Chemical mapping of a 177-nucleotide RNA with DMS and 2A3. The DMS profile rests on 4,963 reads. Conditions: 150 mM KOAc, 10 mM MgCl2 and 150 mM bicine (pH 8.5), 24 C.
RNA sequence: GGGAACGACUCGAGUAGAGUCGAAAACCGAGUCGUCGGAUUUUCGCCGCAGAAAACGGUGGAAUGAAGAGCUGAGACCGGUGCAGCUCGCAACCGCCGUGGCUGCGGAGCUGUUUCGGUCACCGAGAUAAUCCCGGUAGUUCGCUACCGGGAUUAUAAAAGAAACAACAACAACAAC
Reactivity to DMS in 0.01 (KOAc 150mM, MgCl2 10mM, bicine 150mM(pH8.5), 24C), signal-to-noise 3, nucleotides 027 to 126: c010c000g010a010g000u000c040g000u000c040g010g000a090u010u000u010u000c030g000c000c000g030c030a100g040a070a060a120a110c010g000g000u010g000g000a030a020u020g020a300a120g000a090g000c090u010g000a080g000a050c030c040g010g020u020g010c000a000g000c000u000c000g010c020a030a110c000c000g000c200c180g000u030g020g000c040u000g010c000g000g010a010g000c030u000g000u010u020u010c010g020g010u000c000a020c040c080g010a130g000
Reactivity to 2A3 in 0.01 (KOAc 150mM, MgCl2 10mM, bicine 150mM(pH8.5), 24C), signal-to-noise 5, nucleotides 027 to 126: c000c000g000a010g040u110c160g050u010c000g030g030a030u000u010u000u030c030g000c000c010g060c030a060g170a130a170a000a010c010g010g000u010g010g030a030a030u020g000a040a060g010a010g000c040u050g090a070g010a110c010c030g010g010u040g000c000a000g000c000u000c000g030c010a030a030c010c020g160c120c120g270u300g000g010c000u020g000c020g040g010a030g000c020u000g020u000u040u040c000g010g000u050c000a000c030c100g100a100g020